This 177-nucleotide RNA was probed chemically with DMS. The RNA was probed in 150 mM KOAc, 10 mM MgCl2 and 150 mM bicine (pH 8.5) at 24 C. DMS adducts were read by reverse transcription with MarathonRT. The data come from the RNA Mapping Database (RMDB), library TTRINS.
RNA sequence: GGGAACGACUCGAGUAGAGUCGAAAAGAUAUGGAAAACAACUGAAGGUAUGCUGAACUACUCUGAUACGGUCGGAAACGACCGCUAUCAACAAGGAGCAGCAUACCUUCAGUUGUUUUCCUAAGUCCGUAGUAUCUAGCUUCGGCUAGAUACUACGAAAAGAAACAACAACAACAAC
Reactivity to DMS in 0.01 (KOAc 150mM, MgCl2 10mM, bicine 150mM(pH8.5), 24C), signal-to-noise 1, nucleotides 027 to 126: g000a110u000a280u000g000g000a000a000a000a000c020a000a010c010u000g000a010a000g040g000u010a000u010g030c000u000g020a140a150c070u020a220c060u000c230u020g020a000u010a050c010g000g000u010c000g010g000a150a200a130c020g010a030c000c020g000c300u000a000u000c030a040a090c230a060a040g000g020a060g020c010a000g000c000a000u000a000c000c000u000u000c010a020g030u000u000g010u000u000u000u000c000c000u010a050a050g010u000c080